[RMDB]
Structure probing data (2A3 and DMS) for a 177-nucleotide construct.

RNA sequence: GGGAACGACUCGAGUAGAGUCGAAAAGUACGUUGCACACCAAUUAUAGUGGAGCUUUUUGGUUAAGUACUUCCCCCUUGCGAGCAACAGGUGUCGUCCUGUUUGUUAGCCCUGCGCGGUUUCGUCCGAUUGAGUUAUUGUUCGCAAUAACUCAAUCAAAAGAAACAACAACAACAAC
Reactivity to 2A3 in 0.01 (KOAc 150mM, MgCl2 10mM, bicine 150mM(pH8.5), 24C), signal-to-noise 6, nucleotides 027 to 126: g000u000a000c040g050u090u230g070c090a080c010a000c050c010a040a030u140u070a120u110a130g100u070g220g100a110g130c000u040u080u030u040u040g030g000u060u100a130a060g000u010a010c000u040u040c010c000c000c000c010u050u120g030c030g030a030g020c010a000a000c000a010g030g010u180g120u180c040g060u090c000c000u020g020u100u070u040g000u010u030a010g000c020c010c020u080g000c080g000c040g050g000u010u030u020c020g020u000c030c020
Reactivity to DMS in 0.01 (KOAc 150mM, MgCl2 10mM, bicine 150mM(pH8.5), 24C), signal-to-noise 5, nucleotides 027 to 126: g020u000a010c010g020u010u020g010c180a140c190a060c000c010a030a040u000u010a040u010a110g020u000g010g010a120g020c150u000u000u000u000u000g000g000u000u000a080a100g010u010a020c010u000u000c020c010c010c080c050u010u000g020c010g000a090g010c010a030a010c010a010g010g000u000g010u000c170g000u010c020c000u000g000u000u000u000g020u000u000a180g000c010c050c030u000g010c110g020c160g020g000u000u000u000c040g010u000c230c140

The RNA was probed in 150 mM KOAc, 10 mM MgCl2 and 150 mM bicine (pH 8.5) at 24 C. As a SHAPE reagent, 2A3 marks flexible, mostly unpaired nucleotides at the ribose 2'-OH.